The record gives the reactivity of an RNA of 177 nucleotides to DMS and 2A3. The reactions ran in a buffer of 150 mM KOAc, 10 mM MgCl2 and 150 mM bicine (pH 8.5), at 24 C. The DMS profile rests on 1,963 reads. The 2A3 profile rests on 1,391 reads. For 2A3 the reverse transcriptase was SuperScript II with manganese.

[RMDB]
RNA sequence: GGGAACGACUCGAGUAGAGUCGAAAAGUAUUAAGAAUAAACUCCCGACUCUGCCUUUAGCCUCCUAAAUGAAAAGGUAGAUAGAACAGGUCUUGUUUGCAAAAUAAAUUCAAGACCUACUUAUCUAGUAAGCUAAUCAGUUCGCUGAUUAGCUUACAAAAGAAACAACAACAACAAC
Reactivity to DMS in 0.01 (KOAc 150mM, MgCl2 10mM, bicine 150mM(pH8.5), 24C), signal-to-noise 2, nucleotides 027 to 126: g040u000a080u000u010a010a130g000a170a120u000a070a120a040c040u020c080c010c020g000a130c090u000c000u010g040c070c020u010u010u000a050g010c010c020u000c000c050u010a030a050a060u070g070a060a150a020a040g000g070u040a000g000a020u020a000g010a040a080c190a000g030g000u000c000u000u000g000u030u000u000g070c280a050a070a070a200u070a060a050a010u000u010c010a000a010g000a030c000c000u010a070c040u010u000a010u000c060u020a050
Reactivity to 2A3 in 0.01 (KOAc 150mM, MgCl2 10mM, bicine 150mM(pH8.5), 24C), signal-to-noise 3, nucleotides 027 to 126: g090u090a090u130u160a170a140g020a040a110u200a080a070a030c030u000c000c000c000g040a050c040u010c000u060g020c000c010u000u000u020a040g010c000c000u040c020c020u130a150a130a130u200g080a080a080a000a000g070g020u030a000g000a000u050a020g040a040a050c070a070g000g000u000c000u000u010g020u090u000u120g060c060a020a010a060a150u260a100a120a000u030u030c000a000a000g010a000c000c020u000a010c000u020u010a010u010c000u010a030